Structure probing data (DMS) for a 177-nucleotide construct. Values cover nucleotides 27 to 126. The DMS profile rests on 953 reads. The reactions ran in a buffer of 150 mM KOAc, 10 mM MgCl2 and 150 mM bicine (pH 8.5), at 24 C.
RNA sequence: GGGAACGACUCGAGUAGAGUCGAAAAGAAGCGGCACUGGCCGACCUCGCGUGGGUUCGAGCGGUUCUACGGAUUCCUAGGCGGGGAGACCGACCAGUGGUAUCCCGACCUGGUAUACGACAACCACCUUACUUGUCCGGUUCGCCGGACAAGUAAGAAAAGAAACAACAACAACAAC
Reactivity to DMS in 0.01 (KOAc 150mM, MgCl2 10mM, bicine 150mM(pH8.5), 24C), signal-to-noise 1, nucleotides 027 to 126: g010a100a160g000c100g030g010c000a120c020u020g000g000c000c030g040a040c000c000u010c010g050c030g010u010g000g000g010u000u000c000g010a110g020c170g010g000u020u020c030u000a110c040g010g000a040u000u020c010c040u000a070g040g000c010g000g010g010g000a040g000a050c290c010g010a080c070c010a030g000u000g020g010u000a090u000c010c000c000g010a100c060c020u020g010g010u000a130u000a120c100g000a070c190a120a100c030c040a080c150